An RNA of 170 nucleotides, treated with DMS and 2A3 and read out base by base. DMS (dimethyl sulfate) methylates the pairing face of unpaired adenines and cytosines. DMS adducts were read by reverse transcription with MarathonRT. The reactions ran in a buffer of 150 mM KOAc, 10 mM MgCl2 and 150 mM bicine (pH 8.5), at 24 C. For 2A3 the reverse transcriptase was SuperScript II with manganese. Source: RMDB library 15KLIB, as collected in RNAgym.
[RMDB]
RNA sequence: GGGAACGACUCGAGUAGAGUCGAAAAGGAAACCCGCUUUAUUCACUGGGGACGACAACUCUGGGGAGAGAAGGGAGGGUCGGAUGGGAAGAGUAAAUCCUACGGGAAUCCCCCGGUUCCCCUUAUGUACGUAUCAUCUUCGGAUGAUACAAAAGAAACAACAACAACAAC
Reactivity to DMS in 0.01 (KOAc 150mM, MgCl2 10mM, bicine 150mM(pH8.5), 24C), signal-to-noise 9, nucleotides 027 to 129: g040g030a060a090a120c030c020c030g000c260u040u020u020a030u050u050c060a130c070u040g000g000g000g000a100c100g050a080c190a080a090c070u040c050u020g050g020g020g020a080g000a010g020a030a030g030g010g010a160g000g010g010u050c040g020g010a100u040g070g000g000a030a030g010a020g050u010a050a080a060u000c040c020u020a070c100g020g020g010a030a060u030c030c000c000c000c030g000g000u000u000c020c000c020c080u040u050a050u050g020u040a090c180
Reactivity to 2A3 in 0.01 (KOAc 150mM, MgCl2 10mM, bicine 150mM(pH8.5), 24C), signal-to-noise 9, nucleotides 027 to 129: g070g010a060a060a050c010c010c010g010c030u140u180u120a210u120u140c090a070c140u060g000g000g010g020a020c060g040a020c050a130a060c040u020c040u100g010g000g030g000a140g010a010g030a060a040g040g020g070a130g030g020g020u070c060g030g030a070u150g060g020g020a050a060g050a040g070u100a020a050a050u020c010c010u020a060c080g020g000g010a010a050u040c000c000c000c000c000g000g000u020u020c010c000c000c010u040u120a140u120g080u040a020c070